[RMDB]
RNA sequence: GGGAACGACUCGAGUAGAGUCGAAAAAAAGUCCUCAUAUUGCAAGCUUACCUUUUGGAACAAAGGUGAUGGAUAAUAUAUCGAUGGCACAUAACAAGUUAGACUGAAAUAAUGGAAAAAUGUAAGUAGCUAUGGCUGCAUGCAGAGUGGGACCAUACAUAUGAGGAAAUUUCGAUUUCCUCAUAUGAAAAGAAACAACAACAACAAC
Reactivity to DMS in 0.01 (KOAc 150mM, MgCl2 10mM, bicine 150mM(pH8.5), 24C), signal-to-noise 4, nucleotides 027 to 156: a060a070a070g020u000c010c020u000c050a160u000a090u000u000g010c040a090a100g010c050u000u000a060c010c000u000u000u000u010g030g020a210a120c130a040a030a020g010g010u000g010a080u010g020g000a120u000a060a130u000a100u000a080u000c040g020a130u000g030g000c030a100c070a080u010a060a100c070a070a090g020u000u000a080g000a150c040u000g000a050a080a090u000a050a060u000g020g010a030a060a040a070a070u010g010u010a030a060g020u000a060g020c030u000a050u000g020g010c020u000g000c020a090u010g010c030a080g000a110g020u000g000g000g010a110c010c010a040u010a090
Reactivity to 2A3 in 0.01 (KOAc 150mM, MgCl2 10mM, bicine 150mM(pH8.5), 24C), signal-to-noise 7, nucleotides 027 to 156: a000a000a010g060u040c040c020u060c030a070u090a080u090u110g030c040a060a050g030c020u050u060a040c000c010u040u040u070u120g100g040a090a050c070a080a050a010g000g010u030g020a040u070g010g040a020u050a200a040u100a090u030a050u070c050g030a050u080g030g010c020a020c010a090u140a120a030c030a110a020g020u040u040a050g050a050c050u050g060a020a070a100u160a050a070u100g050g050a050a080a030a010a030u110g020u090a030a100g010u020a020g030c030u020a030u130g100g000c010u030g010c020a040u060g000c010a010g060a020g100u090g010g000g000a000c000c010a010u050a040